Structure probing data (DMS and 2A3) for a 177-nucleotide construct. Source: RMDB library OK2TRN, as collected in RNAgym. The reactions ran in a buffer of 150 mM KOAc, 10 mM MgCl2 and 150 mM bicine (pH 8.5), at 24 C. DMS adducts were read by reverse transcription with MarathonRT.
[RMDB]
RNA sequence: GGGAACGACUCGAGUAGAGUCGAAAAUUGCAAAAAUCUAACAGGCGCAGCCCAUGAGCAUUGACACCUUCAUCAGUGCAGCCUCGAGUAUUGCUGUCAUCAGCGUCAGGCAAAUUUGACACACGAGUGUUCCCUUUAAUUUCGAUUAAAGGGAACAAAAAGAAACAACAACAACAAC
Reactivity to DMS in 0.01 (KOAc 150mM, MgCl2 10mM, bicine 150mM(pH8.5), 24C), signal-to-noise 6, nucleotides 027 to 126: u010u000g020c070a030a080a070a110a070u000c050u000a100a090c100a070g000g010c050g010c070a080g010c030c030c020a090u010g010a110g010c030a040u000u010g010a050c080a050c110c040u000u000c070a100u000c060a030g010u010g030c050a100g010c060c020u010c100g010a080g010u010a060u010u000g010c050u000g010u000c080a080u010c070a060g010c040g010u000c060a040g000g000c050a030a060a120u000u000u000g010a050c080a030c070a070c150g010a110g010
Reactivity to 2A3 in 0.01 (KOAc 150mM, MgCl2 10mM, bicine 150mM(pH8.5), 24C), signal-to-noise 2, nucleotides 027 to 126: u060u030g000c010a060a030a070a050a160u090c090u120a140a060c030a120g080g000c050g010c030a010g030c010c000c000a030u060g050a040g050c040a050u030u060g020a020c000a060c060c080u070u040c020a060u020c000a030g020u010g020c030a000g040c000c000u050c050g000a010g050u070a090u180u170g040c050u050g060u120c030a120u080c010a050g020c040g070u020c030a010g000g080c000a010a040a130u130u100u080g050a030c030a000c010a000c070g060a050g070